Structure probing data (2A3 and DMS) for a 177-nucleotide construct. For 2A3, 1,792 sequencing reads were counted. The RNA was probed in 150 mM KOAc, 10 mM MgCl2 and 150 mM bicine (pH 8.5) at 24 C. DMS adducts were read by reverse transcription with MarathonRT.
RNA sequence: GGGAACGACUCGAGUAGAGUCGAAAAAUAAAGCACGGCAAGCACAUGAAGCACAUGAAGCAGUACAAGCACAUGAAGCAGUACAAGCACUACAACCAGUAGAAGCAGCCGAAGCACAUGAAAAAAAGUAAUUACAGGGAUUCGUCCCUGUAAUUACAAAAGAAACAACAACAACAAC
Reactivity to 2A3 in 0.01 (KOAc 150mM, MgCl2 10mM, bicine 150mM(pH8.5), 24C), signal-to-noise 1, nucleotides 027 to 126: a000u170a030a060a030g040c020a000c040g050g020c020a020a030g000c000a020c010a080u070g080a080a010g020c020a030c020a130u110g060a080a010g020c000a010g030u040a000c040a130a000g010c020a030c010a120u080g030a070a020g040c000a010g010u030a000c010a020a070g000c020a010c070u060a010c030a090a090c020c040a000g000u010a040g040a170a020g010c010a000g000c010c020g020a040a020g010c050a030c000a090u090g110a000a000a000a060a000a020a080
Reactivity to DMS in 0.01 (KOAc 150mM, MgCl2 10mM, bicine 150mM(pH8.5), 24C), signal-to-noise 2, nucleotides 027 to 126: a080u030a060a120a130g010c010a040c140g010g010c040a040a030g050c080a080c040a050u000g010a070a070g030c080a110c080a020u000g030a120a070g020c040a080g020u000a000c100a070a070g000c040a050c110a030u000g000a100a070g020c010a070g010u000a030c090a080a080g000c050a070c010u000a040c070a020a080c050c080a080g020u000a040g000a080a080g000c020a060g020c050c050g030a080a040g000c040a020c080a070u020g000a000a000a050a040a040a080a140
2A3 adducts were read by reverse transcription with SuperScript II with manganese.